An RNA of 207 nucleotides, treated with 2A3 and DMS and read out base by base. It was measured as part of the RMDB library OK3TST. The DMS profile rests on 9,445 reads. The 2A3 profile rests on 6,685 reads. The RNA was probed in 150 mM KOAc, 10 mM MgCl2 and 150 mM bicine (pH 8.5) at 24 C. For DMS the reverse transcriptase was MarathonRT.

RNA sequence: GGGAACGACUCGAGUAGAGUCGAAAAGUACGAUCGAGAGAGAACUCGUACGAACGUUCUCGAGUACGUGAGUGUGUGUGAGUUCGAGAGUUCGUACGAGUUCGUACGUUCUCGUGAGAUCGAUCGUGAGAGAACACACGUUCUCUCGAGAACUCGACGAAUCAGAUUAUUUCGAUAAUCUGAUUCGAAAAGAAACAACAACAACAAC
Reactivity to 2A3 in 0.01 (KOAc 150mM, MgCl2 10mM, bicine 150mM(pH8.5), 24C), signal-to-noise 5, nucleotides 027 to 156: g120u070a020c040g030a070u040c040g000a050g030a020g000a000g000a120a000c000u000c000g000u010a000c010g000a010a000c020g150u220u050c010u000c000g000a020g010u090a080c090g040u150g150a190g070u210g030u040g000u020g010u030g130a170g090u060u010c010g000a000g000a000g000u000u000c000g000u000a000c000g000a000g000u010u000c000g000u000a000c000g010u020u000c010u000c000g000u020g020a030g010a040u030c020g020a050u070c060g000u050g000a100g000a020g040a160a020c030a000c010a020c140g010u020u000c000u000c000u000c010g000a010g000a010a020c030u030c030g030a030
Reactivity to DMS in 0.01 (KOAc 150mM, MgCl2 10mM, bicine 150mM(pH8.5), 24C), signal-to-noise 3, nucleotides 027 to 156: g020u000a050c030g010a050u000c020g000a110g000a160g010a180g020a050a030c010u000c030g020u010a030c010g030a050a030c030g020u010u000c010u000c000g000a090g010u000a030c080g030u000g010a130g030u020g030u010g020u000g030u000g020a120g010u000u000c000g010a040g000a090g000u000u000c020g000u000a030c010g020a060g000u000u000c000g010u000a030c070g000u000u000c010u000c000g000u000g030a150g020a120u000c020g020a060u000c000g010u000g010a030g010a110g020a060a060c010a180c210a160c200g010u000u000c010u010c000u000c000g000a090g010a070a180c040u000c020g010a300